[RMDB]
RNA sequence: GGGAACGACUCGAGUAGAGUCGAAAAAUAAGGCUGAUAAACAGGCUCGUCUGUCCCUACUUUUACCACAUUGGCAUUAAUAAUUGGGAAUUUGGCUUGCUUGAUGGAGUCAUCUAAAUAGGCUAAGCUCAUGUGAUAGAUUCGUCUAUCACAUGAGAAAAGAAACAACAACAACAAC
Reactivity to 2A3 in 0.01 (KOAc 150mM, MgCl2 10mM, bicine 150mM(pH8.5), 24C), signal-to-noise 9, nucleotides 027 to 126: a000u130a060a030g040g000c030u020g040a110u100a100a190a020c010a030g030g000c010u000c020g020u010c020u020g050u010c010c010c000u020a050c030u040u060u040u050a040c030c020a120c100a300u120u250g030g000c030a040u070u070a130a080u130a110a080u110u050g020g030g080a030a030u260u170u070g010g000c010u010u030g010c010u030u040g020a040u060g110g030a050g060u040c010a030u010c040u090a080a110a110u100a080g090g000c030u050a060a040g020
Reactivity to DMS in 0.01 (KOAc 150mM, MgCl2 10mM, bicine 150mM(pH8.5), 24C), signal-to-noise 8, nucleotides 027 to 126: a090u010a090a100g000g010c020u020g010a110u010a090a130a190c050a040g000g000c020u000c110g020u000c020u010g000u000c010c000c010u010a100c160u000u000u000u000a060c020c020a110c230a110u010u010g020g000c110a040u010u010a040a050u010a070a090u010u000g010g010g010a060a050u000u000u000g010g010c010u000u000g010c040u000u000g000a090u010g010g000a120g000u010c070a040u000c040u000a050a070a080u000a090g000g010c040u000a080a120g000
An RNA of 177 nucleotides, treated with 2A3 and DMS and read out base by base. The reactions ran in a buffer of 150 mM KOAc, 10 mM MgCl2 and 150 mM bicine (pH 8.5), at 24 C. For DMS, 11,780 sequencing reads were counted. 2A3 adducts were read by reverse transcription with SuperScript II with manganese.